[RMDB]
RNA sequence: GGGAACGACUCGAGUAGAGUCGAAAAUAAGAGAAUUGCUGGUGCAAAAGCGAUGCUUCUUCCCUAUGCACUUCGUCACUCAUCUGACGAUGAAGAUUGGGUAGCCGAGAAAUGGGAAGUUCGUCUAAGUACUCACGUGAUUCGUCACGUGAGUACUAAAAGAAACAACAACAACAAC
Reactivity to DMS in 0.01 (KOAc 150mM, MgCl2 10mM, bicine 150mM(pH8.5), 24C), signal-to-noise 3, nucleotides 027 to 126: u010a070a140g000a090g000a120a050u000u010g010c020u000g010g000u000g010c100a010a050a130a090g030c080g020a080u010g000c090u000u000c020u000u000c000c010c010u000a140u010g010c150a150c050u010u000c110g030u000c010a040c030u000c150a060u010c060u010g010a210c130g010a060u000g000a080a050g000a050u010u000g020g000g010u000a070g010c060c090g000a090g000a030a060a120u000g020g000g010a040a030g000u000u010c060g010u020c040u000a130
Reactivity to 2A3 in 0.01 (KOAc 150mM, MgCl2 10mM, bicine 150mM(pH8.5), 24C), signal-to-noise 1, nucleotides 027 to 126: u070a030a040g090a000g080a060a030u060u040g020c040u030g010g120u140g100c080a030a040a060a000g000c070g010a030u050g050c070u040u000c000u020u010c000c000c000u010a100u080g070c040a010c040u040u040c010g000u010c000a020c010u040c010a060u010c050u110g100a060c070g070a040u140g040a050a040g010a020u000u100g000g000g000u020a040g000c060c030g050a030g050a030a120a060u090g030g000g010a010a000g020u030u020c020g080u000c010u040a060